[RMDB]
RNA sequence: GGGAACGACUCGAGUAGAGUCGAAAAACAUUGGCCUUCGGGCCAAUGUACUGGAAAUAAAGCCGAAAGGCUACCCAUUCCUUAUUUGGCGAAAGCCUGCGAGAUUAUGUAAGUUCGCUUACAUAAACACUUUACUCCUGUUCGCAGGAGUAAAGUGAAAAGAAACAACAACAACAAC
Reactivity to 2A3 in 0.01 (KOAc 150mM, MgCl2 10mM, bicine 150mM(pH8.5), 24C), signal-to-noise 4, nucleotides 027 to 126: a010c000a000u000u010g000g000c010c020u030u040c300g030g010g030c000c000a010a000u000g000u000a020c040u030g000g120a010a100a090u170a130a230a010g000c030c010g040a050a040a010g020g010c000u050a060c010c000c020a020u030u040c000c000u180u140a280u160u210u140g000g000c020g050a100a020a010g000c000c000u010g000c060g130a230g020a170u060u000a000u020g010u010a020a000g010u000u110c210g010c070u020u000a000c000a000u020a000a050a000
Reactivity to DMS in 0.01 (KOAc 150mM, MgCl2 10mM, bicine 150mM(pH8.5), 24C), signal-to-noise 3, nucleotides 027 to 126: a030c000a010u000u000g000g000c000c000u000u010c200g040g010g020c010c000a000a000u000g020u000a020c160u010g020g000a020a030a050u000a120a070a050g020c000c000g000a130a080a170g010g010c000u010a040c060c000c010a150u000u000c010c020u000u000a140u000u020u000g000g000c020g000a090a080a170g010c000c000u000g020c250g010a140g010a150u000u010a010u000g000u010a000a000g010u010u000c260g020c000u000u010a010c010a020u000a010a020a150

Record summary: An RNA of 177 nucleotides, treated with 2A3 and DMS and read out base by base. The reactions ran in a buffer of 150 mM KOAc, 10 mM MgCl2 and 150 mM bicine (pH 8.5), at 24 C. The data come from the RNA Mapping Database (RMDB), library M2PK50. For DMS, 2,181 sequencing reads were counted.